RNA sequence: GGGAACGACUCGAGUAGAGUCGAAAAUCAGCAUGGUUUCCAGGCGGCAGAGCACGGAAUAUUGCUCGGCAUCGGUGAGGAUAUCGCAAUCGAGAAGCUUGCCGCUUUGCAUUCCGGCAAUUGCCAACCUAGCGAAAAUAUUCGUAUUUUCGCUAGGAAAAGAAACAACAACAACAAC
Reactivity to 2A3 in 0.01 (KOAc 150mM, MgCl2 10mM, bicine 150mM(pH8.5), 24C), signal-to-noise 5, nucleotides 027 to 126: u090c010a010g060c050a100u110g080g000u020u030u000c020c020a030g070g010c030g010g030c040a020g010a010g090c050a030c160g020g050a050a030u100a060u080u130g010c020u020c050g010g000c020a050u050c030g030g020u060g020a060g060g050a080u070a040u190c030g020c140a080a100u180c030g020a010g020a170a030g060c020u010u030g000c000c010g000c000u040u020u020g010c010a020u030u010c010c000g010g000c020a030a140u140u060g030c020c010a010a040
Reactivity to DMS in 0.01 (KOAc 150mM, MgCl2 10mM, bicine 150mM(pH8.5), 24C), signal-to-noise 6, nucleotides 027 to 126: u000c120a080g010c070a060u000g030g010u000u000u000c040c060a140g000g010c090g010g020c020a110g010a110g020c010a070c040g010g020a140a090u010a100u010u010g010c020u010c060g020g020c060a070u000c030g000g020u000g010a120g000g010a080u000a080u000c050g010c150a130a130u010c060g010a050g010a120a170g010c020u000u000g010c010c010g000c120u000u000u000g010c060a100u000u000c040c020g010g010c020a120a080u010u000g000c020c050a150a220

Structure probing data (2A3 and DMS) for a 177-nucleotide construct. For DMS, 6,622 sequencing reads were counted. For DMS the reverse transcriptase was MarathonRT.